[RMDB]
Source information:
The record gives the reactivity of an RNA of 207 nucleotides to 2A3. For 2A3 the reverse transcriptase was SuperScript II with manganese. The reactions ran in a buffer of 150 mM KOAc, 10 mM MgCl2 and 150 mM bicine (pH 8.5), at 24 C. Reactivities are given for positions 27 through 156.

RNA sequence: GGGAACGACUCGAGUAGAGUCGAAAAGGGGUCUUACGAGAGAGCCAAGGCUUUUGACGCUCUGAAGCCUCCACGGAGCGAUAAGCCUUGGAACUACUCUCUCAGUAAGACGGAGGCACCCAAAAGACCAGUCGUACAGUUCGCUGUACGACUGGUCCUCAGUAUCUGUGUUCGCACAGAUACUGAGAAAAGAAACAACAACAACAAC
Reactivity to 2A3 in 0.01 (KOAc 150mM, MgCl2 10mM, bicine 150mM(pH8.5), 24C), signal-to-noise 2, nucleotides 027 to 156: g060g000g000g000u000c010u000u000a010c000g000a000g000a000g010a000g010c000c000a000a000g030g000c050u070u210u250u250g160a140c080g000c000u010c000u010g040a110a000g000c000c000u000c000c010a000c010g000g010a010g000c010g060a060u120a260a030g000c000c020u000u000g000g000a010a000c000u060a010c000u000c000u000c010u010c000a000g000u000a000a000g010a000c040g000g000a000g000g000c000a010c000c010c000a040a130a010a020g000a000c000c000a000g000u010c010g000u010a000c000a020g000u030u110c130g080c190u000g000u010a000c000g000a010c010u000g000g010u000c010